[RMDB]
RNA sequence: GGGAACGACUCGAGUAGAGUCGAAAACGACGAACUGGAACCGCAGCGACGCAAUGCCUGGUGCGGCAGCAUUGGCUAUUUGAGCUUUUGCGGCAACAUGGAUACCAGUAUUACUAUCCGCACGCUACACUCCCAUACCCUUCGGGGUAUGGGAGUGAAAAGAAACAACAACAACAAC
Reactivity to 2A3 in 0.01 (KOAc 150mM, MgCl2 10mM, bicine 150mM(pH8.5), 24C), signal-to-noise 1, nucleotides 027 to 126: c080g190a010c080g050a070a050c000u000g020g020a040a000c010c000g000c040a030g010c060g100a060c040g000c040a010a020u030g060c050c020u000g000g020u030g000c000g020g000c020a010g000c000a000u010u020g180g000c050u090a110u270u230u230g160a040g040c000u000u120u180u130g000c000g020g030c020a010a030c030a020u170g110g000a010u050a110c010c000a030g020u050a070u110u220a060c050u020a090u080c000c000g050c000a000c010g020c030u100a050
Reactivity to DMS in 0.01 (KOAc 150mM, MgCl2 10mM, bicine 150mM(pH8.5), 24C), signal-to-noise 1, nucleotides 027 to 126: c110g060a170c100g010a160a030c010u000g000g000a060a130c020c000g000c020a030g000c120g000a110c130g000c010a040a000u010g000c240c080u000g010g020u000g020c000g010g000c040a030g000c000a000u000u010g000g070c030u000a090u020u030u040g010a170g000c030u010u000u000u000g000c000g010g000c070a030a150c090a130u020g000g010a100u020a100c020c020a010g010u000a140u040u010a060c220u000a050u010c000c000g010c010a010c010g000c180u010a110
Structure probing data (2A3 and DMS) for a 177-nucleotide construct. Values cover nucleotides 27 to 126. The reactions ran in a buffer of 150 mM KOAc, 10 mM MgCl2 and 150 mM bicine (pH 8.5), at 24 C. It was measured as part of the RMDB library OK2TST. For DMS, 713 sequencing reads were counted. For 2A3 the reverse transcriptase was SuperScript II with manganese.